RNA sequence: GGGAACGACUCGAGUAGAGUCGAAAAUUAAAUGCUUACCAAGCAAAUCAAGUAAUGCCGAUUCAUAGGCCGUUACAACAUGAAUUGUGGUACGUAAAUCAAAGGUUUGAUUGCCUCUGCCACCACAAAAUCCUAAUGCAUUCGUGCAUUAGGAUUUAAAAGAAACAACAACAACAAC
Reactivity to 2A3 in 0.01 (KOAc 150mM, MgCl2 10mM, bicine 150mM(pH8.5), 24C), signal-to-noise 5, nucleotides 027 to 126: u060u030a030a060a070u080g010c000u060u070a080c020c020a030a000g010c010a030a040a110u150c070a180a110g010u010a020a000u030g000c000c000g100a120u170u170c100a120u160a140g000g010c040c000g000u000u010a000c020a140a030c050a160u180g180a160a120u180u130g020u010g010g000u000a030c080g010u020a110a070a070u010c020a020a040a170g300g020u050u050u020g000a000u000u010g000c010c000u010c000u010g000c000c000a000c010c000a060c020a020
Reactivity to DMS in 0.01 (KOAc 150mM, MgCl2 10mM, bicine 150mM(pH8.5), 24C), signal-to-noise 6, nucleotides 027 to 126: u010u030a070a110a120u010g010c000u010u000a270c060c050a140a190g010c010a090a110a080u010c130a080a170g000u010a010a020u000g020c020c010g000a160u000u000c260a130u000a110g010g020c050c130g010u000u000a020c020a070a110c270a080u010g000a090a120u010u010g010u000g000g000u000a000c120g000u000a020a020a020u000c020a020a040a210g030g010u000u000u000g010a030u000u000g000c010c000u000c000u000g000c020c000a010c020c300a080c190a040